[RMDB]
Description:
Source: RMDB library M2RFPK, as collected in RNAgym. This 207-nucleotide RNA was probed chemically with DMS and 2A3.
RNA sequence: GGGAACGACUCGAGUAGAGUCGAAAACCAUCGACUGUCACCAGAGGCUGCAUCACCUGAUCACUGAUGGCUCAACGGUAUCCGGCGGUACAACUGAAUACUUGUAGCUGCCUUUUGAGCGGGUUGGAAAAUCGGAGGUUGUUCGCAACCUCCGAAACUUGAAUGAAACCUUCGGGUUUCAUUCAAGAAAAGAAACAACAACAACAAC
Reactivity to DMS in 0.01 (KOAc 150mM, MgCl2 10mM, bicine 150mM(pH8.5), 24C), signal-to-noise 1, nucleotides 027 to 156: c000c010a090u010c100g000a150c040u010g010u010c050a090c060c050a090g040a150g030g010c040u000g040c040a120u000c020a080c000c000u010g000a080u000c060a080c060u000g010a090u000g050g040c020u010c010a120a070c060g020g020u010a020u010c040c020g010g010c040g050g000u000a090c110a090a060c010u000g000a060a050u020a060c020u000u000g000u010a070g000c020u000g010c020c030u000u000u040u010g030a070g000c010g060g000g000u010u000g000g000a070a050a090a130u000c000g010g010a060g050g020u000u000g020u000u000c300g030c030a040a010c010c000u020c000c000g010a000a000a040
Reactivity to 2A3 in 0.01 (KOAc 150mM, MgCl2 10mM, bicine 150mM(pH8.5), 24C), signal-to-noise 2, nucleotides 027 to 156: c000c000a040u100c050g110a060c060u050g030u080c050a030c120c040a050g040a070g080g020c010u070g030c020a040u050c000a030c020c000u070g010a050u050c060a010c060u080g020a070u070g110g040c010u000c010a040a050c070g020g000u040a090u050c040c040g010g000c050g050g000u020a020c020a010a030c050u200g060a110a060u080a160c020u040u050g020u020a070g060c010u030g020c010c000u030u120u030u080g050a050g020c050g010g010g000u020u020g050g000a030a040a030a080u030c000g000g000a000g000g010u020u000g000u030u030c100g000c080a000a010c000c000u000c000c000g000a000a000a000

2A3 adducts were read by reverse transcription with SuperScript II with manganese. For 2A3, 1,348 sequencing reads were counted. DMS adducts were read by reverse transcription with MarathonRT. The RNA was probed in 150 mM KOAc, 10 mM MgCl2 and 150 mM bicine (pH 8.5) at 24 C.